Structure probing data (DMS and 2A3) for a 207-nucleotide construct. In probing experiments dimethyl sulfate is read out at A N1 and C N3, which are open when not base-paired. For DMS the reverse transcriptase was MarathonRT.
RNA sequence: GGGAACGACUCGAGUAGAGUCGAAAAAUAAGUUGCUUGAUUAUACAUGGAAGAGGAAUCCUAUAGGAAGACACUUAACUGCUAGUCUCCUAGAUGCUACAAGUGAACAGUAAUUAGAGUCCCAUCCACCCUCUCCAGACGUUAAGUAACAAAAAAACAUUGAAUUAUCAUUCGUGAUAAUUCAAUGAAAAGAAACAACAACAACAAC
Reactivity to DMS in 0.01 (KOAc 150mM, MgCl2 10mM, bicine 150mM(pH8.5), 24C), signal-to-noise 3, nucleotides 027 to 156: a140u010a080a170g020u000u000g010c000u010u000g000a170u020u000a160u020a100c070a100u000g000g000a110a110g000a110g020g010a080a100u000c050c040u000a140u000a050g030g000a090a080g000a020c010a060c050u000u000a080a080c100u000g010c030u000a120g010u000c020u000c010c020u000a050g000a110u010g010c110u000a070c080a070a080g050u000g020a040a060c050a100g010u010a050a120u000u000a060g000a150g000u010c000c010c030a130u000c060c030a070c050c000c010u030c010u010c010c010a120g000a100c150g010u000u000a020a090g030u000a020a110c050a000a000a060a060a090a080a160
Reactivity to 2A3 in 0.01 (KOAc 150mM, MgCl2 10mM, bicine 150mM(pH8.5), 24C), signal-to-noise 3, nucleotides 027 to 156: a000u200a060a080g010u020u000g000c000u010u010g010a030u070u180a110u120a290c100a080u050g010g040a170a120g000a060g020g010a100a070u090c060c020u100a050u080a100g030g030a070a070g010a040c030a000c060u050u090a150a000c150u060g030c050u040a040g010u020c010u020c040c000u010a040g040a080u100g020c040u070a060c050a170a030g040u060g120a090a010c010a040g080u100a070a060u090u080a040g020a010g070u020c000c040c000a000u000c010c000a050c000c000c000u010c000u000c000c000a020g020a050c040g000u000u000a010a010g010u000a020a010c000a090a080a050a050a000a000a000